Chemical mapping of a 177-nucleotide RNA with 2A3 and DMS. It was measured as part of the RMDB library TTRDEL. The DMS profile rests on 3,318 reads. Values are in units of 0.01, from 0 to 300, in steps of 10. Reactivities are given for positions 27 through 126.
[RMDB]
RNA sequence: GGGAACGACUCGAGUAGAGUCGAAAAGAUAUGGAUGUGACUAGGGAGUUACUCGGAAACGAGAAUAACUUUGAUCUAGCACAUCCUAAGUCAAAGCGCUUAACUAAGUUCGCUUAGUUAAGCGCAAGAUACCGUCGUAGUUCGCUACGACGGUAUCAAAAGAAACAACAACAACAAC
Reactivity to 2A3 in 0.01 (KOAc 150mM, MgCl2 10mM, bicine 150mM(pH8.5), 24C), signal-to-noise 4, nucleotides 027 to 126: g020a020u060a030u120g000g000a010u010g020u020g080a300c010u000a010g100g150g010a010g000u000u010a020c000u010c000g020g030a030a010a010c020g010a010g060a190a300u080a020a010c020u090u150u170g160a140u080c010u010a000g030c000a000c000a010u010c000c000u010a020a000g020u010c020a080a050a040g010c000g010c020u020u010a010a000c000u000a000a010g000u050u100c150g080c240u000u000a000g000u000u000a010a000g000c000g010c000a010a000
Reactivity to DMS in 0.01 (KOAc 150mM, MgCl2 10mM, bicine 150mM(pH8.5), 24C), signal-to-noise 3, nucleotides 027 to 126: g010a030u000a200u020g000g010a030u000g010u000g000a190c000u000a000g010g000g010a010g010u010u000a020c000u000c000g000g000a050a050a140c000g010a010g000a160a140u000a000a010c000u000u000u010g010a120u020c010u000a010g010c010a010c000a010u000c000c000u000a000a030g000u000c010a070a100a160g010c000g010c000u000u000a010a000c000u000a000a020g020u000u020c230g000c010u000u000a000g020u000u000a000a000g020c000g030c000a000a010